[RMDB]
RNA sequence: GGGAACGACUCGAGUAGAGUCGAAAAGGUCAGAAACUCCUGCACCGAAGAGAUCCAGCGCAUGGAUGAUGAUCCAGAGGAGGAGCUGAGAUUGGCUCUUGAGAACUCCAUGGGGUCCUCUGAUCAAGUCAUUCGCCUGCUUCGGCAGGCGAAUGACAAAAGAAACAACAACAACAAC
Reactivity to 2A3 in 0.01 (KOAc 150mM, MgCl2 10mM, bicine 150mM(pH8.5), 24C), signal-to-noise 1, nucleotides 027 to 126: g030g010u030c030a030g020a000a090a090c000u000c000c000u010g030c010a000c020c010g000a040a000g040a000g060a260u000c000c000a000g000c010g000c080a030u160g020g030a000u090g000a090u150g010a000u070c000c120a050g000a000g180g130a000g000g000a000g000c000u080g090a010g060a230u070u180g090g080c000u000c000u000u050g040a130g000a100a000c000u050c010c010a070u140g020g000g030g010u060c000c000u030c030u000g000a000u080c000a020a110
This 177-nucleotide RNA was probed chemically with 2A3. It was measured as part of the RMDB library OK1LIB. For 2A3 the reverse transcriptase was SuperScript II with manganese.